[RMDB]
RNA sequence: GGGAACGACUCGAGUAGAGUCGAAAAAGACGGAGUAUAUAGUUUAUCUAGUUCUCUAAGCUGUUCUCCAAUUCUUGGGUGUGCGUGCGAAUGUAUCAAAACAAGAGGAUGUGUACUUUUUACGGACAUACUUGAGCUAGACAACGAACUUUUUACAGAAGGAAUCGGUAUUCGUACCGAUUCCUUCAAAAGAAACAACAACAACAAC
Reactivity to 2A3 in 0.01 (KOAc 150mM, MgCl2 10mM, bicine 150mM(pH8.5), 24C), signal-to-noise 2, nucleotides 027 to 156: a000g080a000c040g020g010a020g090u030a040u020a020u060a180g040u000u120u100a090u080c050u020a010g040u100u040c060u000c020u070a040a050g060c000u010g020u060u000c020u030c010c000a030a120u130u010c020u070u090g020g000g010u040g000u010g020c020g010u020g050c020g020a080a030u080g010u040a050u140c080a040a060a000a120c010a000a060g010a010g120g030a060u040g090u000g010u070a050c000u010u090u050u020u090a040c050g040g000a010c010a030u110a030c000u020u040g010a010g020c020u050a020g020a050c040a070a010c070g020a040a040c040u040u050u110u130u160a070c120a020
Reactivity to DMS in 0.01 (KOAc 150mM, MgCl2 10mM, bicine 150mM(pH8.5), 24C), signal-to-noise 1, nucleotides 027 to 156: a100g020a070c150g010g010a020g020u000a100u010a060u010a200g010u000u000u000a110u020c010u000a160g020u000u020c010u010c100u000a090a160g030c020u010g010u000u000c050u000c010c050a050a220u000u000c010u000u000g020g030g020u000g000u000g030c010g030u000g000c120g030a130a090u010g010u000a090u000c070a030a050a080a100c070a040a130g010a160g020g000a050u010g010u000g040u000a050c070u010u000u000u000u030a130c060g040g060a040c030a070u000a060c040u000u000g000a180g000c010u000a080g010a070c070a040a080c020g020a080a110c110u010u010u010u030u010a070c120a160
An RNA of 207 nucleotides, treated with 2A3 and DMS and read out base by base.